[RMDB]
Structure probing data (DMS and 2A3) for a 177-nucleotide construct. The data come from the RNA Mapping Database (RMDB), library OK1LIB. For DMS, 12,106 sequencing reads were counted. The 2A3 profile rests on 4,532 reads.
RNA sequence: GGGAACGACUCGAGUAGAGUCGAAAAAAUCGGGCGUGGCCUGAUCGACUUGUCGCUAGUAUGCGCCCAAUUGAUGCCCGCUACAGCAAGCCAAUGGUCGGUGCAGGGUAUGUGGUCGGGCCGUCCAUAUACGGCCCUUGUUCGCAAGGGCCGUAUAAAAAGAAACAACAACAACAAC
Reactivity to DMS in 0.01 (KOAc 150mM, MgCl2 10mM, bicine 150mM(pH8.5), 24C), signal-to-noise 5, nucleotides 027 to 126: a100a060u010c070g010g000g010c010g010u020g030g030c020c000u000g000a020u010c020g000a040c050u000u000g010u030c030g010c080u020a100g030u020a090u020g010c020g010c030c030c020a090a040u000u000g000a090u040g010c000c040c260g000c050u040a070c180a140g000c080a090a280g000c020c020a060a100u000g010g030u020c110g010g010u020g000c010a060g010g000g000u010a030u000g010u020g010g010u030c020g000g010g000c010c020g020u000c000c040a100
Reactivity to 2A3 in 0.01 (KOAc 150mM, MgCl2 10mM, bicine 150mM(pH8.5), 24C), signal-to-noise 5, nucleotides 027 to 126: a000a010u220c110g000g000g020c060g030u100g070g040c020c000u030g000a030u020c020g110a070c030u050u080g040u070c010g020c180u010a070g040u080a110u140g190c010g000c010c010c030a030a060u050u080g050a050u120g020c060c100c090g000c060u100a100c080a060g060c030a100a050g020c010c010a040a060u050g050g030u070c050g000g000u060g010c010a040g010g030g020u050a070u090g040u030g000g020u040c010g030g000g000c010c000g000u000c000c010a000